[RMDB]
RNA sequence: GGGAACGACUCGAGUAGAGUCGAAAAAUUGCCGAAGCAAGCGUUUUUCCAUGCAGGAUUAUGAGAGAUUAGCUUCAAUAGUCUGACUGUAAGCUGUGGGUCUUUCGACCAGCUGGAGAAGUUGCAGAUGAUCAGCUCGCGGACCACACGAUCAUGAUCAACUGCGUAAGUUCGCUUACGCAGUUGAAAAAGAAACAACAACAACAAC
Reactivity to 2A3 in 0.01 (KOAc 150mM, MgCl2 10mM, bicine 150mM(pH8.5), 24C), signal-to-noise 2, nucleotides 027 to 156: a010u120u070g050c000c000g020a080a020g040c050a030a070g010c060g020u020u000u000u060u070c030c010a040u250g000c000a000g030g130a120u040u140a060u260g060a020g000a010g000a040u030u170a150g050c000u030u060c050a000a050u040a040g040u050c080u170g080a130c010u060g040u050a000a010g000c020u030g030u120g140g100g060u020c060u020u110u030c010g000a010c020c010a000g000c010u010g000g000a010g000a030a010g100u120u180g000c010a000g020a080u080g030a110u120c010a000g010c060u020c030g000c020g020g010a040c000c050a040c020a000c060g080a100u030c050a060u150g040a010
Reactivity to DMS in 0.01 (KOAc 150mM, MgCl2 10mM, bicine 150mM(pH8.5), 24C), signal-to-noise 1, nucleotides 027 to 156: a150u010u010g040c000c030g020a140a110g000c000a120a150g000c040g050u000u030u000u000u000c000c010a080u010g050c000a200g030g020a110u020u000a090u050g030a100g010a060g030a150u000u000a090g000c040u000u000c100a040a150u000a040g040u000c090u010g010a110c110u020g010u020a030a090g000c030u000g020u000g130g030g020u000c030u000u010u010c030g010a110c000c000a090g000c000u000g000g000a130g030a100a120g020u000u000g020c010a110g020a110u000g010a070u010c010a130g000c070u000c070g010c130g000g000a160c020c040a100c060a100c070g000a060u000c010a060u000g010a180
Background: Chemical mapping of a 207-nucleotide RNA with 2A3 and DMS. The RNA was probed in 150 mM KOAc, 10 mM MgCl2 and 150 mM bicine (pH 8.5) at 24 C. For DMS the reverse transcriptase was MarathonRT. The DMS profile rests on 1,791 reads. For 2A3 the reverse transcriptase was SuperScript II with manganese. High 2A3 reactivity points to a flexible backbone, as in loops and unpaired stretches.